[RMDB]
RNA sequence: GGGAACGACUCGAGUAGAGUCGAAAAACUUGAUUCGUUGAGAAGCAUGUGUAACCAUUUGAAGCGAUUGUCCGUAUAAACAUCCCGAUCAACAAAUAAAAAACUAUAUAAGCUAGAGGGUAUGUACAUAGAUUCUACGCUAUGUAAGAUUGGCACACCAUCAUAGUGGGUUCGCCCACUAUGAUGGAAAAGAAACAACAACAACAAC
Reactivity to 2A3 in 0.01 (KOAc 150mM, MgCl2 10mM, bicine 150mM(pH8.5), 24C), signal-to-noise 3, nucleotides 027 to 156: a020c030u040u030g010a040u100u060c050g040u010u090g050a070g010a100a030g020c040a120u060g050u040g010u070a070a060c020c010a090u070u070u110g140a110a020g040c020g070a060u030u080g040u090c050c020g050u100a030u060a090a100a000c000a030u020c060c000c000g050a080u130c040a000a130c020a050a170a080u220a160a150a020a040a010a010c120u120a110u070a050u060a300a000g030c040u040a020g020a070g050g030g030u080a040u100g020u010a010c010a020u020a020g040a000u210u000c040u100a080c170g000c010u010a000u060g000u020a040a040g010a080u060u080g020g010c070a010c020a020
Reactivity to DMS in 0.01 (KOAc 150mM, MgCl2 10mM, bicine 150mM(pH8.5), 24C), signal-to-noise 1, nucleotides 027 to 156: a030c020u010u010g050a080u000u000c040g030u000u070g000a130g000a060a080g030c030a040u000g000u030g030u020a100a130c040c010a100u000u000u020g030a130a120g010c060g030a110u000u000g020u000c010c000g000u000a110u000a040a050a060c040a110u000c010c010c020g000a130u000c030a030a080c010a030a050a180u010a030a080a070a060a030a130c080u000a100u020a070u000a060a120g030c060u010a080g000a150g010g030g010u000a060u010g000u000a050c040a060u000a020g020a000u020u000c090u010a060c000g000c060u010a040u000g010u000a080a090g000a110u000u010g000g040c040a030c080a140
This 207-nucleotide RNA was probed chemically with 2A3 and DMS.
For 2A3 the reverse transcriptase was SuperScript II with manganese.
The 2A3 profile rests on 1,247 reads.
Reactivities are rounded to 0.1 and cut off at 0 and 3.
Source: RMDB library OK3TST, as collected in RNAgym.
The reactions ran in a buffer of 150 mM KOAc, 10 mM MgCl2 and 150 mM bicine (pH 8.5), at 24 C.
Values cover nucleotides 27 to 156.